Chemical mapping of a 177-nucleotide RNA with 2A3 and DMS.
RNA sequence: GGGAACGACUCGAGUAGAGUCGAAAAGAUAUGGAUCCAUGUGGACGAUGAAAGGGAUCGGAAACGAUCCCUGGAGUCCAUGUGGAGUCCUAAGUCAAACUAUCGAGUCGUUCGCGACUCGAUAGAAGCAACCUUAAAUGUUCGCAUUUAAGGUUGCAAAAGAAACAACAACAACAAC
Reactivity to 2A3 in 0.01 (KOAc 150mM, MgCl2 10mM, bicine 150mM(pH8.5), 24C), signal-to-noise 1, nucleotides 027 to 126: g030a000u070a020u100g000g020a020u060c000c010a000u030g000u010g020g010a010c060g300a300u040g010a020a020a010g000g000g000a000u000c000g000g000a060a070a000c000g000a000u000c000c000c040u000g020g010a000g000u010c020c000a000u000g010u010g000g000a010g010u040c000c000u000a020a010g020u010c060a070a070a130c020u010a000u000c010g000a020g000u010c000g000u000u040c070g000c000g010a010c000u000c020g020a010u000a000g020a010a020
Reactivity to DMS in 0.01 (KOAc 150mM, MgCl2 10mM, bicine 150mM(pH8.5), 24C), signal-to-noise 2, nucleotides 027 to 126: g000a010u000a260u010g000g000a300u020c000c000a010u000g030u010g030g010a030c020g020a090u010g000a120a220a030g000g010g010a000u000c000g000g000a070a050a090c000g000a000u000c000c010c000u000g000g000a020g000u000c020c000a010u000g000u000g000g020a170g000u000c000c000u000a010a110g000u000c060a100a090a270c000u000a000u000c010g000a020g010u000c010g000u000u010c210g040c000g000a010c010u000c000g000a010u000a010g000a100a100
Source: RMDB library TTRDEL, as collected in RNAgym. For 2A3, 3,658 sequencing reads were counted. For DMS the reverse transcriptase was MarathonRT.